[RMDB]
Description: Conditions: 150 mM KOAc, 10 mM MgCl2 and 150 mM bicine (pH 8.5), 24 C. An RNA of 177 nucleotides, treated with DMS and read out base by base. Values cover nucleotides 27 to 126. For DMS the reverse transcriptase was MarathonRT.
RNA sequence: GGGAACGACUCGAGUAGAGUCGAAAAGAUAUGGAUAAUGUGGAAUUCCCCACGGAGCAACAGCUCCCUGUCGGAAACGACAGUGGAGACAUGCUCUCGUGUGGGGAAUUCCACAUUAUCCUAAGUCCAGUAGUAGCAGGUUCGCCUGCUACUACUGAAAAGAAACAACAACAACAAC
Reactivity to DMS in 0.01 (KOAc 150mM, MgCl2 10mM, bicine 150mM(pH8.5), 24C), signal-to-noise 1, nucleotides 027 to 126: g020a090u010a300u000g010g000a020u000a000a000u000g030u000g010g000a010a000u010u000c000c000c010c010a000c000g020g000a020g000c000a040a120c300a180g010c000u000c000c000c010u000g010u000c000g000g000a140a120a260c010g020a000c000a000g010u010g010g000a040g020a040c100a170u000g010c030u000c000u000c240g020u010g050u000g000g010g060g000a010a000u000u000c000c010a000c000a000u000u010a000u000c000c000u010a010a110g000u000c020